[RMDB]
The data come from the RNA Mapping Database (RMDB), library OK1LIB.
An RNA of 177 nucleotides, treated with 2A3 and DMS and read out base by base.
For 2A3 the reverse transcriptase was SuperScript II with manganese.
RNA sequence: GGGAACGACUCGAGUAGAGUCGAAAAGAAGAGCAGGCAGAUAAUCUUGUGCAGUAUGCAUGCUCUUACCUCCACACGAAGAAAGGCAGCAAAAGAAUAACUGCCACUGCACAAGUGGAGCCGCAGACAUGCACUAGCCAUUCGUGGCUAGUGCAUGAAAAGAAACAACAACAACAAC
Reactivity to 2A3 in 0.01 (KOAc 150mM, MgCl2 10mM, bicine 150mM(pH8.5), 24C), signal-to-noise 4, nucleotides 027 to 126: g040a010a000g000a000g000c010a000g020g020c030a010g030a130u140a090a120u240c020u050u040g000u020g010c010a000g000u120a040u100g030c000a010u000g000c000u000c000u000u020a040c020c000u000c010c000a070c000a020c140g140a030a110g050a120a140a040g000g000c000a010g000c060a020a020a030a140g190a110a150u140a100a040c020u000g000c000c000a010c000u010g000c000a000c000a010a020g000u030g000g020a050g020c060c050g040c080a020g020a080
Reactivity to DMS in 0.01 (KOAc 150mM, MgCl2 10mM, bicine 150mM(pH8.5), 24C), signal-to-noise 2, nucleotides 027 to 126: g020a040a010g000a010g000c000a000g000g030c000a060g020a170u050a040a050u060c010u000u000g000u000g000c010a010g020u000a060u040g040c000a070u000g000c000u010c000u020u000a110c030c000u020c020c010a100c110a120c210g020a090a060g000a090a070a080g010g020c010a070g000c100a050a150a060a110g020a250a090u000a120a230c000u050g000c030c000a130c010u000g000c000a000c050a000a030g000u010g000g000a100g000c050c070g030c130a030g030a160
DMS adducts were read by reverse transcription with MarathonRT.